[RMDB]
RNA sequence: GGGAACGACUCGAGUAGAGUCGAAAAGACUGUCUACGGACAGUCACCUAUGCUACGGCAUAGGAGGUGACGUUCGCGUCACCAGAUGGACGUACGCGUCCAUCAAGUGGACUCUUCGGAGUCCACAACAAUCCGUACGCGGAUUGAGAUCCUCGUGAGAGGAUCAAGAAGCACUACGGUGCUUCAACAUUGACUUCGGUCAAUGAAUUCAGGUGAUUUGCUACCUUUAAGUGCAGCUAGAAAUUCUAGGUGCGCUACGGCGCACCACUAAUGGCUUCGGCCAUUAGAAAAGAAACAACAACAACAAC
Reactivity to 2A3 in 0.01 (KOAc 150mM, MgCl2 10mM, bicine 150mM(pH8.5), 24C), signal-to-noise 6, nucleotides 027 to 266: g000a000c000u000g000u000c000u020a040c250g080g010a000c000a000g000u010c000a010c000c000u000a000u000g000c000u020a050c300g130g000c000a000u000a000g010g020a080g000g000u000g000a020c020g020u050u100c280g020c010g090u000c000a000c000c000a010g000a000u000g000g010a000c010g000u070a030c300g020c010g120u000c000c000a000u000c020a020a030g000u000g000g000a000c000u000c000u020u040c270g110g000a000g000u000c000c000a000c000a000a000c000a000a000u000c010c000g020u020a030c300g010c010g130g000a000u010u030g020a070g000a030u000c000c000u010c020g030u070g040a140g000a000g010g010a000u000c010a000a010g000a000a000g000c000a000c010u050a020c300g090g000u000g000c000u000u010c010a020a020c000a000u000u000g000a000c010u040u040c240g050g000u000c000a000a000u030g060a030a090u200u300c120a020g000g010u040g080a300u120u090u110g000c010u010a010c020c000u100u170u300a010a000g010u010g000c000a000g010c030u100a060g140a180a260a100u170u060c050u090a080g020g010u010g000c010g000c020u030a060c210g080g000c010g000c000a000c000c000a000
Reactivity to DMS in 0.01 (KOAc 150mM, MgCl2 10mM, bicine 150mM(pH8.5), 24C), signal-to-noise 1, nucleotides 027 to 266: g000a010c010u010g000u000c010u000a130c170g020g010a020c000a000g020u000c040a070c010c000u010a010u000g000c000u000a100c150g000g010c010a020u000a000g020g000a150g010g000u030g000a010c000g040u000u010c230g030c000g000u010c000a000c000c030a070g000a010u010g000g010a000c000g030u010a120c230g070c040g020u000c000c000a000u000c030a100a160g030u000g000g000a040c010u000c000u020u020c120g000g010a010g000u010c010c010a000c030a100a140c020a000a000u000c000c000g030u020a110c260g020c000g000g000a040u020u000g000a150g010a020u000c000c000u000c010g000u030g020a300g000a010g000g000a000u010c010a110a040g000a000a000g010c000a000c040u000a110c090g040g030u000g000c000u010u010c010a200a300c000a010u000u000g010a030c000u000u020c150g010g000u000c010a000a010u010g000a260a070u020u000c290a010g010g000u000g000a140u030u000u000g000c000u010a040c020c000u000u000u020a000a000g010u010g000c000a000g020c300u020a060g010a060a110a090u010u000c020u000a080g040g020u040g030c030g080c000u000a000c140g010g010c020g050c010a020c040c000a170

Background
Conditions: 150 mM KOAc, 10 mM MgCl2 and 150 mM bicine (pH 8.5), 24 C. Structure probing data (2A3 and DMS) for a 307-nucleotide construct. For DMS, 3,279 sequencing reads were counted. 2A3 adducts were read by reverse transcription with SuperScript II with manganese. Source: RMDB library POS240, as collected in RNAgym. Values are in units of 0.01, from 0 to 300, in steps of 10.